An RNA of 207 nucleotides, treated with 2A3 and DMS and read out base by base. 2A3 is a SHAPE reagent: it acylates the 2'-hydroxyl of flexible nucleotides of all four kinds. It was measured as part of the RMDB library M2RFPK.
RNA sequence: GGGAACGACUCGAGUAGAGUCGAAAAAGACCACCUCUACGGAGGUGGUCGAGUCACGUAGCUAGUACCAGGUUGCAAUACUAGAGCGUUAGUCCUGGGGCGUACGGUGGCAGUACGCUGCCACCGAUAAAACUUGAAUACUUCGGUAUUCAAGUAACUAAACUUGUGUGUUCGCACACAAGUUUAGAAAAGAAACAACAACAACAAC
Reactivity to 2A3 in 0.01 (KOAc 150mM, MgCl2 10mM, bicine 150mM(pH8.5), 24C), signal-to-noise 2, nucleotides 027 to 156: a010g010a000c010c010a000c080c000u010c000u030a080c280g050g000a000g020g010u020g020g010u000c000g000a000g010u080c040a030c010g040u050a020g070c000u000a000g000u050a210c000c000a010g010g010u000u010g000c000a000a000u010a000c000u000a010g000a000g030c100g100u140u210a000g020u110c000c000u000g010g010g020g070c110g060u160a080c020g000g000u010g020g000c000a000g000u030a020c300g000c050u000g000c010c000a000c000c000g000a010u010a000a030a010a010c000u000u000g000a000a010u010a000c000u000u090c230g040g000u000a000u000u000c010a000a000g000u000a040a010
Reactivity to DMS in 0.01 (KOAc 150mM, MgCl2 10mM, bicine 150mM(pH8.5), 24C), signal-to-noise 1, nucleotides 027 to 156: a110g020a030c000c020a010c000c000u020c000u000a090c300g060g020a030g020g040u020g020g000u010c010g000a030g000u000c040a160c060g010u000a110g020c000u000a030g000u000a020c010c020a080g000g010u010u000g040c020a170a070u000a070c000u000a000g040a250g000c010g060u000u000a040g000u000c000c020u000g000g000g000g040c090g030u000a030c020g020g010u000g030g040c030a040g060u010a040c280g000c030u000g000c000c000a010c010c000g000a020u000a000a060a150a110c000u000u000g000a070a000u000a010c000u000u020c300g050g000u000a000u000u000c000a020a000g010u010a010a150
About this RNA
The RNA was probed in 150 mM KOAc, 10 mM MgCl2 and 150 mM bicine (pH 8.5) at 24 C.